The record gives the reactivity of an RNA of 207 nucleotides to 2A3 and DMS. The reactions ran in a buffer of 150 mM KOAc, 10 mM MgCl2 and 150 mM bicine (pH 8.5), at 24 C. Values cover nucleotides 27 to 156.

RNA sequence: GGGAACGACUCGAGUAGAGUCGAAAAGAGCGUUACGACGAAGGGAAAGCAUAGCGGAUAAGUUGUGGAACCAUGUCACCGUUUGCAUGUUUGAAGUUGAAAGCUUCUUUGAACUCGAAAUAAAGGGGAAAUGAUGGUCCUGUAUCAUAUCUACAAAGCGUAAAAUGGGGUUCGCCCCAUUUUACGCAAAAGAAACAACAACAACAAC
Reactivity to 2A3 in 0.01 (KOAc 150mM, MgCl2 10mM, bicine 150mM(pH8.5), 24C), signal-to-noise 1, nucleotides 027 to 156: g090a000g050c070g010u070u110a030c080g030a000c020g030a130a060g070g000g000a000a000a070g000c000a110u110a120g020c000g050g040a050u090a130a090g040u050u000g040u100g060g010a000a030c050c000a010u010g000u050c070a030c030c010g050u030u050u070g020c030a020u140g020u020u010u090g010a060a030g020u060u070g080a130a100a060g080c020u030u040c000u030u020u000g000a050a080c000u020c120g030a000a000a110u190a050a190a030g020g000g000g010a060a060a030u150g070a040u070g020g000u070c020c010u020g030u080a000u070c030a010u040a030u160c000u180a050c090a030a020a230
Reactivity to DMS in 0.01 (KOAc 150mM, MgCl2 10mM, bicine 150mM(pH8.5), 24C), signal-to-noise 1, nucleotides 027 to 156: g060a040g020c040g030u000u010a040c070g010a100c080g060a040a090g040g010g040a060a110a120g040c040a130u000a050g060c070g010g010a070u000a070a150g010u010u020g010u000g000g050a000a070c230c000a060u000g000u000c040a080c030c000g040u000u000u010g030c100a100u000g000u000u000u010g070a080a050g010u000u000g000a050a070a130g000c060u000u000c040u010u010u010g010a010a070c010u000c070g010a030a080a070u000a050a100a030g020g030g000g030a100a030a060u000g030a120u000g040g000u000c020c040u000g000u000a000u000c020a010u000a080u000c030u000a070c040a010a100a230